[RMDB]
RNA sequence: GGGAACGACUCGAGUAGAGUCGAAAAUGAGGUGCCUACAACGUGUUUUUGAGUGGGCCUGUGUCUCUGUGUGCGCCGUGUGCGGAUAGCUUGCUAUGCGUGUGUGGUUGUGUGUGGAUUGAUGUGGUAGAAUCCCAGGAUUCGUCCUGGGAUUCUAAAAAGAAACAACAACAACAAC
Reactivity to DMS in 0.01 (KOAc 150mM, MgCl2 10mM, bicine 150mM(pH8.5), 24C), signal-to-noise 2, nucleotides 027 to 126: u030g000a210g010g030u000g000c000c010u010a060c060a030a130c180g010u030g000u000u010u030u000u000g000a110g030u010g020g000g000c020c040u020g020u010g010u010c000u000c010u000g000u010g010u000g010c060g010c000c000g060u020g010u010g000c020g010g010a040u000a030g000c010u030u000g000c040u010a030u020g010c030g030u000g010u010g020u040g000g000u010u000g030u010g000u000g000u010g020g010a180u000u010g010a050u060g010u030g020g010
Reactivity to 2A3 in 0.01 (KOAc 150mM, MgCl2 10mM, bicine 150mM(pH8.5), 24C), signal-to-noise 3, nucleotides 027 to 126: u220g020a030g010g050u140g000c010c000u020a050c010a050a000c080g070u080g050u000u040u040u080u110g090a060g010u070g000g000g060c010c000u060g100u010g030u010c000u000c000u010g030u000g010u020g020c020g000c000c000g050u090g060u050g050c010g000g050a000u040a010g010c090u070u130g000c000u040a010u050g090c010g010u010g000u010g020u060g010g010u080u030g030u030g020u010g000u010g020g020a040u010u070g040a060u080g010u030g020g030